[RMDB]
RNA sequence: GGGAACGACUCGAGUAGAGUCGAAAAAGCAGCGUACCACUUACGAGUGGUACGCUGCAACUGUAAAGACAUGCAGAGCUGUAGAGCCUGUUCUUACAAUAUUAAUGUAAGGCAUGUCGAAGAAAAAGUAUUAAAUAUUGUUCGCAAUAUUUAAUACAAAAGAAACAACAACAACAAC
Reactivity to 2A3 in 0.01 (KOAc 150mM, MgCl2 10mM, bicine 150mM(pH8.5), 24C), signal-to-noise 5, nucleotides 027 to 126: a000g000c000a000g000c000g010u010a010c010c050a010c010u050u030a050c230g130a010g010u000g000g010u000a000c010g000c000u000g000c000a000a000c000u010g000u040a010a020a030g000a000c010a000u010g000c010a020g080a210g180c020u090g080u300a080g060a010g300c010c010u090g080u110u010c000u000u000a000c010a020a070u140a170u300u280a150a090u080g010u000a000a000g000g000c000a010u000g000u020c030g000a050a030g080a030a100a020a000a010
Reactivity to DMS in 0.01 (KOAc 150mM, MgCl2 10mM, bicine 150mM(pH8.5), 24C), signal-to-noise 5, nucleotides 027 to 126: a090g000c010a000g020c020g010u000a010c010c010a010c010u000u010a140c190g020a050g050u000g010g040u000a000c010g030c020u010g000c020a000a020c050u010g010u010a100a110a130g000a000c000a000u000g000c000a090g010a130g010c000u000g010u050a080g000a030g010c020c010u000g010u020u010c000u000u000a000c010a030a110u020a120u030u030a070a100u010g000u000a000a010g000g010c010a000u000g010u000c000g010a110a110g000a050a060a070a120a120
This 177-nucleotide RNA was probed chemically with 2A3 and DMS. For 2A3 the reverse transcriptase was SuperScript II with manganese.